[RMDB]
RNA sequence: GGGAACGACUCGAGUAGAGUCGAAAAUGCCUGCUGCUGCAGCAGGUGCAGGCGCUUGAGGCGCUGGCGACGGAGCACGGCUACACUGAGAGCCUGCUGCAUAGCGACAGCCUCACAGAGAACGAAGAUCUGGAGCUGAAUUCGUUCAGCUCCAGAUAAAAGAAACAACAACAACAAC
Reactivity to DMS in 0.01 (KOAc 150mM, MgCl2 10mM, bicine 150mM(pH8.5), 24C), signal-to-noise 2, nucleotides 027 to 126: u000g010c000c000u010g010c020u010g020c090u010g050c110a170g010c080a040g000g000u000g030c020a050g030g010c040g000c100u000u000g000a060g020g000c000g000c200u010g000g030c000g020a160c190g000g020a020g000c030a020c250g010g020c010u010a030c020a170c240u010g010a080g000a050g000c010c000u000g020c020u010g010c040a030u000a230g000c000g000a160c060a120g010c010c000u010c000a030c170a050g010a130g000a080a110c130g010a090a080g000
Reactivity to 2A3 in 0.01 (KOAc 150mM, MgCl2 10mM, bicine 150mM(pH8.5), 24C), signal-to-noise 1, nucleotides 027 to 126: u070g000c010c000u000g050c010u010g020c040u090g160c060a080g040c050a030g050g000u010g030c000a010g010g030c070g050c070u090u150g020a040g030g050c020g010c170u050g030g080c000g020a000c050g060g030a000g040c020a040c060g030g000c000u040a020c160a120c140u170g130a140g040a000g300c010c030u000g000c000u020g100c000a010u060a030g000c010g050a040c020a060g030c010c010u070c040a010c060a000g100a010g040a110a030c120g000a090a040g020
An RNA of 177 nucleotides, treated with DMS and 2A3 and read out base by base. DMS adducts were read by reverse transcription with MarathonRT. It was measured as part of the RMDB library OK2TRN. Conditions: 150 mM KOAc, 10 mM MgCl2 and 150 mM bicine (pH 8.5), 24 C.